[RMDB]
RNA sequence: GGGAACGACUCGAGUAGAGUCGAAAAGGCCGAUCGACUCGAUCGAUAUCUGGCCCGAUCAUGUGUGCGUACGGCGCGAGGCCGAUCUCGGCCUGUCUAGGAUCUAGGCCUACGUACGAUCAGCGCAGGUGUAAAAACCGUUCGCGGUUUUUACACCAAAAGAAACAACAACAACAAC
Reactivity to DMS in 0.01 (KOAc 150mM, MgCl2 10mM, bicine 150mM(pH8.5), 24C), signal-to-noise 3, nucleotides 027 to 126: g020g000c010c000g000a030u000c000g010a020c020u010c220g000a200u000c010g000a040u010a030u010c080u030g060g030c010c000c060g010a080u020c080a160u000g030u000g000u000g010c000g010u000a050c100g040g010c130g000c200g010a060g030g010c000c000g000a120u010c260u000c040g010g020c010c050u010g000u000c030u000a080g020g020a160u010c040u010a090g010g000c000c010u020a050c020g010u000a030c030g000a090u010c080a110g010c090g000c090a100
Reactivity to 2A3 in 0.01 (KOAc 150mM, MgCl2 10mM, bicine 150mM(pH8.5), 24C), signal-to-noise 2, nucleotides 027 to 126: g030g010c000c000g000a000u010c010g060a050c030u040c120g130a300u000c010g020a020u160a150u090c190u150g100g030c010c020c000g000a030u110c040a090u130g210u020g010u020g210c000g010u020a060c090g020g000c000g040c090g130a040g010g000c000c000g060a210u050c170u100c080g000g000c000c000u000g060u050c000u070a070g080g130a090u050c040u110a050g060g000c000c000u010a020c000g010u050a030c000g030a080u080c070a030g010c050g000c140a080